Chemical mapping of a 207-nucleotide RNA with 2A3.
RNA sequence: GGGAACGACUCGAGUAGAGUCGAAAACUGUAGGGCCGCCCUAAAUAAGUGGUGUUGAUGCUUAGGUCCUGCGCAAUGAAAGCUCAUGAACCCCGUCAGAUCCGGAAGGAAGCAGCGGUAAGUGAUCACUUUUGUGUGCCGUGGGGGUGCCUAAGUUUACGCAUGAUAUGUUCGCAUAUCAUGCGUAAAAAGAAACAACAACAACAAC
Reactivity to 2A3 in 0.01 (KOAc 150mM, MgCl2 10mM, bicine 150mM(pH8.5), 24C), signal-to-noise 1, nucleotides 027 to 156: c070u080g160u230a070g010g060g020c140c050g070c050c010c030u120a160a130a110u140a090a040g050u030g060g000u030g040u070u030g040a150u140g020c010u000u010a000g000g020u300c000c020u040g010c000g010c010a000a010u040g000a040a000a030g000c040u010c040a000u020g000a020a030c000c020c070c020g000u030c000a000g000a040u000c000c000g220g110a130a080g040g000a010a000g020c040a000g040c000g010g000u040a010a080g000u000g000a000u100c020a000c080u020u000u000u000g040u030g100u120g040c060c040g020u010g010g030g000g020g000u060g030c000c000u030a020a000g000u000u010
For 2A3, 664 sequencing reads were counted. The data come from the RNA Mapping Database (RMDB), library ARCHII.